An RNA of 177 nucleotides, treated with DMS and read out base by base.
Reactivities are rounded to 0.1 and cut off at 0 and 3.
The reactions ran in a buffer of 150 mM KOAc, 10 mM MgCl2 and 150 mM bicine (pH 8.5), at 24 C.

RNA sequence: GGGAACGACUCGAGUAGAGUCGAAAAGAUAUGGAGAAUCGUGACUAUGAAAGUGACAUGAUCUCUAAUCGGAAACGAUUAACGUGAGAUCAACAGCACUUUCAUAGUCACGAUUUCUCCUAAGUCACCUGUGUAAGACGUUCGCGUCUUACACAGGAAAAGAAACAACAACAACAAC
Reactivity to DMS in 0.01 (KOAc 150mM, MgCl2 10mM, bicine 150mM(pH8.5), 24C), signal-to-noise 1, nucleotides 027 to 126: g000a010u000a300u030g010g030a010g020a010a020u000c000g000u020g000a020c020u000a000u000g000a010a000a000g040u030g000a040c070a220u000g000a010u000c010u010c020u000a010a000u000c000g000g010a150a110a270c010g000a010u000u000a040a160c300g010u020g030a010g010a020u000c000a020a120c300a180g000c010a000c010u000u010u010c010a010u000a000g000u010c000a000c020g000a000u020u000u010c000u000c000c010u020a010a040g000u000c070a180